Structure probing data (2A3) for a 177-nucleotide construct. The RNA was probed in 150 mM KOAc, 10 mM MgCl2 and 150 mM bicine (pH 8.5) at 24 C. The 2A3 profile rests on 809 reads. It was measured as part of the RMDB library RFM100. Reactivities are given for positions 27 through 126.
[RMDB]
RNA sequence: GGGAACGACUCGAGUAGAGUCGAAAACAGUCAAACGGUAUAUCUCAAACGACUACGGUUUACUCCAAAUUCAUUGGCUAGUUGAGGCCAAGAAACACCUGAUUUUUUAAUGCUAAAUUUCUAGCUUUACUCCAAUAGACUUCGGUCUAUUGGAGUAAAAAGAAACAACAACAACAAC
Reactivity to 2A3 in 0.01 (KOAc 150mM, MgCl2 10mM, bicine 150mM(pH8.5), 24C), signal-to-noise 2, nucleotides 027 to 126: c030a000g150u130c080a020a020a020c010g100g000u040a050u030a050u050c010u000c050a250a160a080c090g050a010c020u000a010c020g150g000u000u040u060a060c050u070c000c050a020a080a110u110u070c030a080u070u060g050g010c000u000a160g110u070u060g060a080g070g020c000c000a000a000g020a000a070a000c090a030c020c010u020g150a160u000u000u000u020u070u290a130a030u170g000c010u030a060a130a000u040u110u000c050u020a000g000c000u010u000
Overview:
For 2A3 the reverse transcriptase was SuperScript II with manganese.